[RMDB]
RNA sequence: GGGAACGACUCGAGUAGAGUCGAAAAAACCAACAAACUGAAGUCAACAACACCUUCGACCUCCAACGCCCGACCAUAUUGAUCCUCGCAAUGCCCGAAUGGGCCCAACCACAAGUCGGUCUCUGUUCUUUUUGCUAACGUUCGCGUUAGCAAAAAGAAAAGAAACAACAACAACAAC
Reactivity to 2A3 in 0.01 (KOAc 150mM, MgCl2 10mM, bicine 150mM(pH8.5), 24C), signal-to-noise 2, nucleotides 027 to 126: a000a000c020c000a040a000c090a070a040a040c070u040g030a050a010g010u040c040a060a000c000a020a070c010a250c000c050u030u020c010g000a040c020c000u030c000c030a100a010c070g000c050c000c000g030a040c040c000a010u040a090u180u160g060a070u070c050c040u010c010g010c010a060a220u130g000c000c050c000g120a050a040u080g000g000g000c010c000c000a000a060c030c000a070c000a100a020g020u040c040g010g000u000c010u000c000u040g100u120u000
About this RNA:
Structure probing data (2A3) for a 177-nucleotide construct. Values cover nucleotides 27 to 126. High 2A3 reactivity points to a flexible backbone, as in loops and unpaired stretches. For 2A3, 696 sequencing reads were counted.